Chemical mapping of a 177-nucleotide RNA with 2A3 and DMS. Source: RMDB library OK1LIB, as collected in RNAgym. For 2A3 the reverse transcriptase was SuperScript II with manganese. 2A3 is a SHAPE reagent: it acylates the 2'-hydroxyl of flexible nucleotides of all four kinds. Conditions: 150 mM KOAc, 10 mM MgCl2 and 150 mM bicine (pH 8.5), 24 C. Reactivities are rounded to 0.1 and cut off at 0 and 3. For DMS, 15,188 sequencing reads were counted. For 2A3, 14,633 sequencing reads were counted.
RNA sequence: GGGAACGACUCGAGUAGAGUCGAAAAGCGGAAUUAAAGAAGCGACAUAUCCCAGUAGCUUCGUAUAUGCCUACAAGGGAAAAUAGAGUUGCAGUAAAACGCAAAAGUUCACCAGAAAGGUGUAAACGCUAAGUGAAAAAUUCGUUUUUCACUUAGCAAAAGAAACAACAACAACAAC
Reactivity to 2A3 in 0.01 (KOAc 150mM, MgCl2 10mM, bicine 150mM(pH8.5), 24C), signal-to-noise 9, nucleotides 027 to 126: g070c050g050g100a080a080u170u120a150a120a100g080a060a020g010c010g030a020c010a030u160a060u040c000c020c000a000g010u000a010g000c000u020u020c020g010u040a080u020a010u090g030c020c000u060a090c120a160a280g050g000g030a040a110a040a050u180a060g130a020g080u030u030g000c010a000g040u160a020a070a060a040c050g000c010a020a060a030a000g040u040u040c020a040c060c000a020g230a150a130a020g020g000u030g020u080a060a090a010c050
Reactivity to DMS in 0.01 (KOAc 150mM, MgCl2 10mM, bicine 150mM(pH8.5), 24C), signal-to-noise 7, nucleotides 027 to 126: g020c090g000g000a130a120u030u010a050a090a130g000a000a010g000c000g010a050c060a090u020a100u010c010c000c000a170g020u010a110g010c010u000u000c060g030u030a110u020a020u020g000c030c000u000a060c160a160a190g010g000g000a090a060a070a100u020a110g000a100g010u000u000g010c010a020g000u020a070a060a130a140c120g000c010a020a040a030a100g010u010u010c020a120c000c000a080g000a100a100a050g000g020u000g010u020a000a060a080c170